[RMDB]
RNA sequence: GGGAACGACUCGAGUAGAGUCGAAAAAUCCCGGGGCUCGGUGUGGAGAAGGAGGUGCCAAGUAGCCCCGUUGCGGAGAGUGUGUCAGCCCCAUCGCAGUGCACCUCACUGCCCUCCCGCUUCCCCGAUACACUCGUUGAUUCGUCAACGAGUGUAUAAAAGAAACAACAACAACAAC
Reactivity to DMS in 0.01 (KOAc 150mM, MgCl2 10mM, bicine 150mM(pH8.5), 24C), signal-to-noise 3, nucleotides 027 to 126: a130u030c010c010c020g020g000g020g020c250u000c110g020g030u040g000u050g000g000a040g000a080a080g000g000a030g000g010u000g000c010c070a110a100g010u000a090g020c030c010c030c040g000u010u000g000c070g030g010a120g000a070g010u000g020u000g000u030c090a060g020c040c010c000c070a070u020c080g020c060a080g020u040g000c040a010c000c020u000c010a090c010u010g000c110c070c010u000c030c020c010g020c060u040u010c020c010c000c070g000
Reactivity to 2A3 in 0.01 (KOAc 150mM, MgCl2 10mM, bicine 150mM(pH8.5), 24C), signal-to-noise 5, nucleotides 027 to 126: a000u020c010c000c010g000g000g010g000c140u130c130g010g040u060g050u200g050g030a050g020a080a030g060g000a020g000g010u020g010c000c020a080a050g070u090a030g040c000c000c000c030g080u120u110g040c030g010g020a050g000a060g110u070g010u020g040u110c040a030g020c010c000c020c000a050u060c030g010c060a020g000u060g180c010a010c010c000u010c010a070c000u010g010c020c000c000u000c000c000c000g000c010u030u020c000c000c010c000g000

Background
Structure probing data (DMS and 2A3) for a 177-nucleotide construct. It was measured as part of the RMDB libraries RFM100 and RFMREP. Values are in units of 0.01, from 0 to 300, in steps of 10. Conditions: 150 mM KOAc, 10 mM MgCl2 and 150 mM bicine (pH 8.5), 24 C. Reactivities are given for positions 27 through 126.